[RMDB]
RNA sequence: GGGAACGACUCGAGUAGAGUCGAAAAAGAAUGCGGACGACAUAGAAUUCAAGUUUUGGGUAGCACCUCUUGUGCAUAUGACCCUUUUAAGAGCCGACGAAGGGCGCACAUUUCUGCAUGCAUUCGGCAAUGAGUUCCAAGGACAAAUCCGUCCAUGUAUAACAACCUCAUUCGUGAGGUUGUUAUAAAAAGAAACAACAACAACAAC
Reactivity to 2A3 in 0.01 (KOAc 150mM, MgCl2 10mM, bicine 150mM(pH8.5), 24C), signal-to-noise 2, nucleotides 027 to 156: a020g080a070a010u050g010c000g000g040a020c060g050a010c060a040u200a040g090a070a050u180u190c100a050a110g050u130u130u190u180g000g020g020u050a040g000c030a020c030c020u090c040u040u100g030u010g040c050a010u030a070u300g090a240c000c000c000u000u000u060u000a140a040g020a030g050c000c000g010a030c030g020a070a010g030g010g070c020g080c010a010c030a050u090u120u060c030u060g000c020a020u040g010c010a030u000u050c000g020g000c000a090a120u080g010a080g040u060u050c020c020a030a050g000g000a000c020a040a160a100u100c040c010g020u000c020c000a040u080g070
Reactivity to DMS in 0.01 (KOAc 150mM, MgCl2 10mM, bicine 150mM(pH8.5), 24C), signal-to-noise 1, nucleotides 027 to 156: a090g000a070a080u000g000c050g020g000a070c030g000a140c060a110u030a090g010a050a080u010u000c060a140a100g000u000u000u020u010g010g000g020u000a150g010c010a080c020c100u000c060u000u000g020u000g030c040a120u000a100u020g020a080c000c000c010u020u040u010u020a110a110g030a130g010c030c040g020a060c070g000a080a050g000g010g080c020g000c030a030c020a110u010u000u010c040u000g000c040a040u000g010c010a120u010u010c010g010g070c030a060a130u010g010a120g010u000u000c010c010a120a140g010g030a160c030a060a070a150u000c050c070g010u000c050c010a050u010g000